Chemical mapping of a 177-nucleotide RNA with DMS and 2A3. DMS adducts were read by reverse transcription with MarathonRT.
RNA sequence: GGGAACGACUCGAGUAGAGUCGAAAAUCCCAAAGCGGAUUUAGCUCGGUUGGGAGAGUUCCAGACCGAAGAUCUGGACGUCCUGUGUUCGAUCCACAGAAUUCGCACCAUAAACAACGGGAGAUUCAGUCAUAUAUAGGUUCGCCUAUAUAUGACUAAAAGAAACAACAACAACAAC
Reactivity to DMS in 0.01 (KOAc 150mM, MgCl2 10mM, bicine 150mM(pH8.5), 24C), signal-to-noise 8, nucleotides 027 to 126: u000c000c000c000a050a100a120g020c020g010g010a020u010u000u020a080g010c140u000c020g010g010u030u010g000g000g000a060g000a130g000u010u010c010c000a010g000a020c010c100g040a190a140g010a270u000c010u000g000g000a020c070g020u000c050c020u000g000u020g000u020u000c050g000a100u010c100c130a090c080a120g000a050a010u010u020c030g010c040a170c160c110a070u020a080a080a080c170a100a070c090g010g000g010a130g010a130u020u010c120
Reactivity to 2A3 in 0.01 (KOAc 150mM, MgCl2 10mM, bicine 150mM(pH8.5), 24C), signal-to-noise 9, nucleotides 027 to 126: u010c010c000c000a040a030a000g020c010g000g000a010u010u030u070a030g020c010u010c030g090g070u130u170g080g060g000a070g010a040g050u160u000c000c000a000g020a010c030c110g200a110a040g040a160u010c010u040g000g010a010c000g070u040c000c010u050g020u020g020u070u070c030g010a020u010c020c010a020c000a040g060a030a020u030u020c020g000c030a050c020c020a070u160a150a170a040c080a050a040c060g020g060g010a110g010a040u120u130c060
About this RNA
Values cover nucleotides 27 to 126. Source: RMDB library OK1LIB, as collected in RNAgym. The DMS profile rests on 17,846 reads. The reactions ran in a buffer of 150 mM KOAc, 10 mM MgCl2 and 150 mM bicine (pH 8.5), at 24 C.